[RMDB]
RNA sequence: GGGAACGACUCGAGUAGAGUCGAAAACAAGCUCAUCCUAGCGGAGAUUGCUGAGACUGGCCAAUCCAGCUCACCCCAUGCCAUUCUCCGCUACUCGGAACCUGGCUUGAAGAUUUGGAAAGUUCACUGGCAGCGCGGUGGUGAUUGUGGCCCAGGCCCAUUCUUACUGGUUCGCCAGUAAGAAUGGAAAAGAAACAACAACAACAAC
Reactivity to DMS in 0.01 (KOAc 150mM, MgCl2 10mM, bicine 150mM(pH8.5), 24C), signal-to-noise 3, nucleotides 027 to 156: c020a030a060g020c020u000c060a140u000c010c010u000a050g040c010g020g020a020g000a030u000u000g010c030u000g000a100g000a070c020u000g010g010c040c150a150a140u000c080c070a070g010c050u010c150a190c070c040c040c040a080u000g030c070c020a090u000u000c000u000c000c000g040c020u000a010c010u020c080g000g000a070a130c070c070u000g020g020c040u000u000g000a080a120g010a160u000u000u000g010g000a080a060a140g010u010u000c040a070c060u000g020g020c020a080g020c080g010c080g010g040u000g000g000u000g000a090u010u010g030u010g000g020c000c020c030a140g020g030c140
Reactivity to 2A3 in 0.01 (KOAc 150mM, MgCl2 10mM, bicine 150mM(pH8.5), 24C), signal-to-noise 5, nucleotides 027 to 156: c010a010a010g020c020u080c080a100u080c010c010u020a000g000c000g010g000a010g010a000u030u040g020c050u060g020a040g060a220c010u010g030g000c100c110a030a050u060c000c000a000g010c000u010c010a100c020c040c030c030a080u140g030c030c010a060u130u040c020u000c000c000g000c010u000a010c020u020c040g000g020a020a030c020c050u080g030g000c000u000u000g040a070a040g030a110u120u130u170g030g030a060a070a030g030u050u050c040a020c100u030g000g010c030a040g010c040g030c050g070g030u040g000g020u050g030a080u050u100g020u050g070g020c010c000c030a040g020g030c000

Structure probing data (DMS and 2A3) for a 207-nucleotide construct. It was measured as part of the RMDB library OK3TST. Reactivities are given for positions 27 through 156. The 2A3 profile rests on 4,598 reads.